Source: RMDB library OK3TST, as collected in RNAgym. This 207-nucleotide RNA was probed chemically with 2A3 and DMS. In probing experiments dimethyl sulfate is read out at A N1 and C N3, which are open when not base-paired. For DMS the reverse transcriptase was MarathonRT. The RNA was probed in 150 mM KOAc, 10 mM MgCl2 and 150 mM bicine (pH 8.5) at 24 C.
RNA sequence: GGGAACGACUCGAGUAGAGUCGAAAAUUGUGUCAGUUGUAUUCCAACAGCAAUUGGCACUAACUAUCGGGCAGUUGGAAUACCUGGUAGUGACUCAGUGCUCCUAAUCUAAGUACUGAGUGAUCUUGUCAACUAAGAUUAGGAGUUGGCAAGUGUACGUGACGAGUCUGUUCGCAGACUCGUUACGAAAAGAAACAACAACAACAAC
Reactivity to 2A3 in 0.01 (KOAc 150mM, MgCl2 10mM, bicine 150mM(pH8.5), 24C), signal-to-noise 9, nucleotides 027 to 156: u130u080g010u000g010u010c000a000g000u010u020g040u090a150u180u190c120c070a110a050c060a110g000c000a010a020u020u010g000g000c010a010c010u020a040a020c000u020a010u030c010g000g020g000c030a120g050u070u080g120g000a090a070u070a080c000c000u000g010g000u010a020g010u010g050a000c000u000c000a000g000u000g000c000u040c020c030u080a120a150u120c050u090a090a000g010u000a010c000u000g000a010g010u020g010a020u030c010u000u010g000u010c000a010a000c000u030a070a050g150a300u100u170a080g160g000a040g010u000u000g000g000c000a010a000g000u010g010u050a030
Reactivity to DMS in 0.01 (KOAc 150mM, MgCl2 10mM, bicine 150mM(pH8.5), 24C), signal-to-noise 4, nucleotides 027 to 156: u000u010g020u000g030u000c000a030g020u000u000g000u000a060u000u000c070c200a090a150c100a210g010c000a030a020u000u000g020g020c010a050c010u010a050a050c040u000a010u000c010g020g020g060c010a060g030u000u000g010g010a250a110u000a020c010c000u000g000g000u000a020g000u000g000a100c020u000c020a040g020u000g000c010u000c030c070u010a110a130u010c230u000a060a040g020u000a030c010u000g030a040g010u000g020a040u000c010u000u000g010u000c010a030a020c030u010a070a140g000a240u000u020a130g020g000a060g020u000u000g000g000c020a020a030g010u000g000u000a120